[RMDB]
RNA sequence: GGGAACGACUCGAGUAGAGUCGAAAAAUGCAUUAGGAGUCGAUAUGAAUGGGAAAUCAUAAAGCAGCUUUAACGAAGCAAGUUUUUACAUUUGCAUCUGAGUUAUAUGCAUACGGCGUAAGGGAAGCAGAUCCGAGUAGUUCGCUACUCGGAUCUGAAAAGAAACAACAACAACAAC
Reactivity to DMS in 0.01 (KOAc 150mM, MgCl2 10mM, bicine 150mM(pH8.5), 24C), signal-to-noise 1, nucleotides 027 to 126: a000u010g000c020a020u020u000a000g020g000a140g020u000c030g030a130u000a040u000g010a020a030u000g020g020g000a040a040a080u000c070a080u010a020a120a030g010c100a110g010c010u000u000u010a100a100c240g000a030a030g040c030a040a050g000u000u010u020u000u000a090c090a030u010u000u000g000c000a120u000c060u030g010a200g050u000u000a040u000a050u020g020c010a020u010a090c150g000g010c040g020u020a080a050g010g010g030a060a130g000